[RMDB]
RNA sequence: GGGAACGACUCGAGUAGAGUCGAAAAGGGGAUGCUGAUGCUCCUCAUGGGCUUGCUGAGAUGAUUAAAUGGGUCCAACUACGUAAAGUGCUUCCAACAGUGCCCAGCCCACAGGAGGUGCUCAGUAAGCUGAGCAUAUGUUCGCAUAUGCUCAGCUAAAAGAAACAACAACAACAAC
Reactivity to DMS in 0.01 (KOAc 150mM, MgCl2 10mM, bicine 150mM(pH8.5), 24C), signal-to-noise 3, nucleotides 027 to 126: g010g030g000g010a280u010g010c030u000g020a050u010g010c000u000c020c010u000c010a130u000g010g000g010c020u000u000g030c040u010g000a180g010a120u010g000a090u000u000a030a080a140u020g000g000g000u010c090c080a080a100c090u010a100c160g010u000a050a040a150g000u000g000c080u000u010c040c090a050a080c140a040g000u000g000c050c050c070a070g010c010c000c010a050c280a120g010g000a020g010g020u000g000c010u000c010a020g010u000a070
Reactivity to 2A3 in 0.01 (KOAc 150mM, MgCl2 10mM, bicine 150mM(pH8.5), 24C), signal-to-noise 3, nucleotides 027 to 126: g050g000g000g020a010u060g000c020u040g000a060u260g000c010u020c010c000u010c010a030u040g000g010g010c010u030u050g000c030u110g060a120g010a280u170g010a040u120u180a060a060a080u100g000g000g010u020c050c010a060a040c060u100a020c070g220u160a090a140a070g050u050g020c060u050u070c040c020a040a030c020a090g000u040g040c050c000c000a000g010c000c040c000a030c020a030g300g010a030g000g000u020g010c000u010c000a000g030u030a040
The record gives the reactivity of an RNA of 177 nucleotides to DMS and 2A3. Conditions: 150 mM KOAc, 10 mM MgCl2 and 150 mM bicine (pH 8.5), 24 C. For 2A3, 2,853 sequencing reads were counted. For DMS the reverse transcriptase was MarathonRT.